RNA sequence: GGGAACGACUCGAGUAGAGUCGAAAAUCGGUUGUUUCUCUGAAGGCAUGAUCACCCCGUCCGAUGCGGAAGUUCGUGCUUCCGUCGAACGCGAAAGUCGGACGGCGGCCAUGAUUCGCAACGCAAAUAUACAUUUAGUAGUUCGCUACUAAAUGAACUGAGAUUCUAGGUUCGCCUAGAAUCUCAGAAAAGAAACAACAACAACAAC
Reactivity to 2A3 in 0.01 (KOAc 150mM, MgCl2 10mM, bicine 150mM(pH8.5), 24C), signal-to-noise 1, nucleotides 027 to 156: u070c040g040g010u000u000g000u000u010u000c120u070c120u110g050a100a050g280g000c000a020u090g010a000u080c080a060c010c040c020c010g000u000c000c000g020a010u050g000c020g000g010a010a020g020u120u290c240g060u300g030c010u010u000c000c010g000u000c000g050a110a080c050g030c020g210a140a110a000g020u010c000g000g010a010c000g000g000c020g000g000c060c000a050u030g000a000u040u060c030g000c060a110a080c090g090c090a000a200a040u110a000u020a070c000a010u000u000u000a000g000u000a020g000u010u000c190g000c100u000a000c010u000a000a000a000u000g000a030a000